Overview:
Chemical mapping of a 207-nucleotide RNA with DMS and 2A3.
[RMDB]
RNA sequence: GGGAACGACUCGAGUAGAGUCGAAAAAAUGCCGCCUCAGUUCCAAGCUCUUUCGUGGCACUGUAAACAGUCCUAUUGAGUUAGGGGCAGUCAACCACGUUGCGAAGCUAAAUUAUGUGGUCGAGAGUUACGAUUCCCUACUUCGGUAGGGAAUCAACAGUGAAGUGACUUUCGAGUCACUUCACUGAAAAGAAACAACAACAACAAC
Reactivity to DMS in 0.01 (KOAc 150mM, MgCl2 10mM, bicine 150mM(pH8.5), 24C), signal-to-noise 2, nucleotides 027 to 156: a040a020u000g010c020c020g020c030c000u000c070a140g000u000u000c050c030a180a300g010c030u000c000u000u000u000c030g020u000g030g030c060a030c010u000g020u000a060a140a160c070a200g010u000c020c010u020a050u000u010g030a280g020u000u000a020g000g000g030g020c010a040g010u000c030a120a020c000c030a050c030g060u000u010g030c110g030a100a120g040c020u000a070a050a180u000u020a040u000g010u010g010g040u000c050g000a160g010a130g000u000u000a070c140g020a050u000u000c000c010c000u000a000c020u010u000c210g100g040u000a020g030g000g000a000a020u000c000a060a150
Reactivity to 2A3 in 0.01 (KOAc 150mM, MgCl2 10mM, bicine 150mM(pH8.5), 24C), signal-to-noise 3, nucleotides 027 to 156: a000a020u100g040c030c010g030c000c010u030c020a060g020u090u060c030c020a050a030g000c010u000c000u010u020u060c040g030u040g000g010c070a020c050u030g040u110a070a140a100c030a050g100u060c010c010u000a060u010u130g140a170g270u040u040a030g000g010g010g010c000a000g000u020c030a010a030c000c000a000c000g000u020u040g080c110g160a110a030g000c050u050a040a060a110u250u230a120u180g060u000g020g000u040c030g060a030g010a010g190u070u080a050c090g000a000u000u000c000c010c000u000a000c000u030u040c090g040g000u020a010g000g020g030a000a000u020c000a000a000